RNA sequence: GGGAACGACUCGAGUAGAGUCGAAAAAUAGGCCCCGCCAGCGCCGGUCAGGGCUUGUACGAACUGCUGAUGAAACGCCGUCGCCUGCAAGCUAAGCGCCUGAUAGGCCUGAGCGUGUCUGGCGAACGCGAAACCUAAUAUUCGUAUUAGGUUUCGCAAAAGAAACAACAACAACAAC
Reactivity to DMS in 0.01 (KOAc 150mM, MgCl2 10mM, bicine 150mM(pH8.5), 24C), signal-to-noise 8, nucleotides 027 to 126: a140u010a160g020g000c020c000c010c050g010c020c010a020g010c120g020c100c020g010g010u000c020a020g010g010g000c000u000u000g010u000a050c080g010a090a060c040u000g010c020u000g020a160u010g010a110a130a140c120g010c030c070g010u000c030g010c080c090u000g000c010a010a030g010c010u010a070a120g010c170g010c010c000u010g010a120u010a140g010g010c000c010u000g000a030g010c020g010u010g010u010c030u000g000g010c010g000a090a080c190
Reactivity to 2A3 in 0.01 (KOAc 150mM, MgCl2 10mM, bicine 150mM(pH8.5), 24C), signal-to-noise 7, nucleotides 027 to 126: a010u120a080g160g040c000c010c000c030g000c010c010a040g010c040g030c100c040g050g130u020c010a020g010g000g000c000u010u020g020u020a030c050g030a190a030c040u030g020c020u050g030a190u120g060a250a150a030c060g000c010c010g010u000c010g030c070c010u020g000c000a000a010g000c010u100a140a040g090c020g040c060c010u170g090a230u160a140g000g000c000c010u010g000a040g020c010g010u070g020u030c040u010g000g000c010g020a070a020c070

An RNA of 177 nucleotides, treated with DMS and 2A3 and read out base by base.
Reactivities are rounded to 0.1 and cut off at 0 and 3.
For 2A3 the reverse transcriptase was SuperScript II with manganese.
It was measured as part of the RMDB library OK2TST.
Reactivities are given for positions 27 through 126.
For 2A3, 14,615 sequencing reads were counted.
The DMS profile rests on 13,676 reads.
In probing experiments dimethyl sulfate is read out at A N1 and C N3, which are open when not base-paired.